Structure probing data (2A3 and DMS) for a 177-nucleotide construct. For DMS the reverse transcriptase was MarathonRT. Conditions: 150 mM KOAc, 10 mM MgCl2 and 150 mM bicine (pH 8.5), 24 C.

RNA sequence: GGGAACGACUCGAGUAGAGUCGAAAAGAGGUAACCGGGCUCCGCAACCCCUGCGCGCAGAUUGACGCCUUCAUGCCGGGGCUGCUGCGCGUCAUGGUUCAGCCGCGCCCCGGCGGCCCACCGGCUCUCAUUAUGCAGUGUUCGCACUGCAUAAUGAAAAAGAAACAACAACAACAAC
Reactivity to 2A3 in 0.01 (KOAc 150mM, MgCl2 10mM, bicine 150mM(pH8.5), 24C), signal-to-noise 5, nucleotides 027 to 126: g090a040g040g050u050a050a010c010c030g020g020g000c010u040c060c020g020c010a040a100c010c000c000c010u040g000c020g000c000g010c020a010g020a090u140u170g060a050c060g050c020c000u100u120c080a110u190g030c030c030g000g000g020g000c030u090g000c000u010g000c020g000c010g020u020c030a050u090g050g010u080u110c050a020g030c020c020g020c030g000c020c010c000c000g000g000c000g000g000c000c010c000a040c010c020g030g000c010u010c000
Reactivity to DMS in 0.01 (KOAc 150mM, MgCl2 10mM, bicine 150mM(pH8.5), 24C), signal-to-noise 5, nucleotides 027 to 126: g020a050g000g010u030a090a120c030c040g000g010g020c020u000c070c040g010c090a070a100c090c040c030c030u000g000c030g000c040g000c040a040g000a130u020u010g000a090c150g020c010c020u010u010c090a110u030g010c030c030g010g000g000g030c010u010g010c010u010g010c020g010c020g010u000c130a050u020g000g030u010u000c110a100g000c040c140g010c130g010c030c020c010c000g000g010c030g000g010c000c040c020a110c060c050g000g010c070u020c070